[RMDB]
RNA sequence: GGGAACGACUCGAGUAGAGUCGAAAACGCAAAGCUGCAGCGCGGCGCUCUGGAGGCCUUGCCCCGCGCACUGCUCUUCACAUGGCCCGACGUGAGGGCACUUCGCGGGCAGUGCUGCGGCCUCGUGAAACUGCCCCUAAGUUCGCUUAGGGGCAAACAUCAAUAUUUGAUUCGUCAAAUAUUGAUGAAAAGAAACAACAACAACAAC
Reactivity to DMS in 0.01 (KOAc 150mM, MgCl2 10mM, bicine 150mM(pH8.5), 24C), signal-to-noise 2, nucleotides 027 to 156: c040g050c030a070a050a030g000c030u010g000c020a030g000c030g030c030g030g010c020g010c040u000c050u000g060g030a200g000g010c010c020u000u000g010c050c000c000c010g050c050g000c070a040c050u010g000c000u000c010u000u010c030a050c010a120u000g020g000c110c040c050g020a090c080g010u010g010a120g010g000g020c000a030c020u000u000c020g030c010g010g010g040c010a130g020u000g030c010u010g040c010g030g010c000c010u000c060g070u000g000a150a060a100c070u000g010c000c000c000c000u010a010a060g030u000u000c300g020c010u000u010a000g020g020g010g090c000a000a010a040
Reactivity to 2A3 in 0.01 (KOAc 150mM, MgCl2 10mM, bicine 150mM(pH8.5), 24C), signal-to-noise 4, nucleotides 027 to 156: c040g010c030a050a050a020g000c010u000g010c010a020g020c020g010c030g060g030c050g060c100u090c080u190g280g060a080g010g050c020c020u050u100g020c010c010c000c010g000c000g000c000a010c010u010g000c000u010c050u220u140c030a030c010a080u160g190g030c020c070c050g110a110c090g010u010g010a030g000g010g000c000a010c020u040u040c020g000c000g000g010g000c020a010g010u020g010c010u010g000c010g010g000c000c000u010c000g000u020g000a090a080a020c060u050g000c000c000c020c000u000a000a000g010u010u100c160g050c100u000u000a010g000g000g000g000c000a000a000a000

The record gives the reactivity of an RNA of 207 nucleotides to DMS and 2A3. The data come from the RNA Mapping Database (RMDB), library M2RFOK.